Conditions: 150 mM KOAc, 10 mM MgCl2 and 150 mM bicine (pH 8.5), 24 C. An RNA of 177 nucleotides, treated with 2A3 and DMS and read out base by base. For 2A3 the reverse transcriptase was SuperScript II with manganese. The 2A3 profile rests on 3,832 reads. Reactivities are rounded to 0.1 and cut off at 0 and 3. For DMS the reverse transcriptase was MarathonRT.
[RMDB]
RNA sequence: GGGAACGACUCGAGUAGAGUCGAAAAAAGGACACCAAGUCGGGCCAGUCCAAGGGCUUCGGUUUCGUGCGCUUCGGCUCUUACGAUGCCCAGAUGCGCGUGCUCACCAAUCGCCAUCUGAUCGACGGACAUCGUCUUUAUUCGUAAAGACGAUGUCAAAAGAAACAACAACAACAAC
Reactivity to 2A3 in 0.01 (KOAc 150mM, MgCl2 10mM, bicine 150mM(pH8.5), 24C), signal-to-noise 3, nucleotides 027 to 126: a000a020g090g000a030c030a000c020c020a020a010g010u010c020g030g000g000c020c010a060g160u110c120c050a100a100g180g010g010c030u300u300c090g000g030u010u020u040c040g010u000g020c040g010c050u010u030c010g010g020c010u000c000u000u030a020c040g000a060u080g030c000c000c010a000g000a010u070g000c090g000c010g060u050g000c020u060c050a110c040c050a040a090u070c010g000c020c010a010u020c010u050g060a130u090c040g040a050c030g030
Reactivity to DMS in 0.01 (KOAc 150mM, MgCl2 10mM, bicine 150mM(pH8.5), 24C), signal-to-noise 4, nucleotides 027 to 126: a080a100g000g000a070c030a070c020c090a030a060g010u000c030g000g010g000c010c020a120g000u010c150c190a100a090g020g000g000c020u010u010c060g010g020u000u000u000c300g010u010g000c050g010c080u000u000c050g000g000c000u000c010u010u000a110c070g010a050u010g000c010c000c030a080g020a020u000g020c180g000c000g000u000g000c080u000c140a150c130c110a100a080u010c000g010c020c000a050u000c010u010g000a120u010c070g000a210c270g010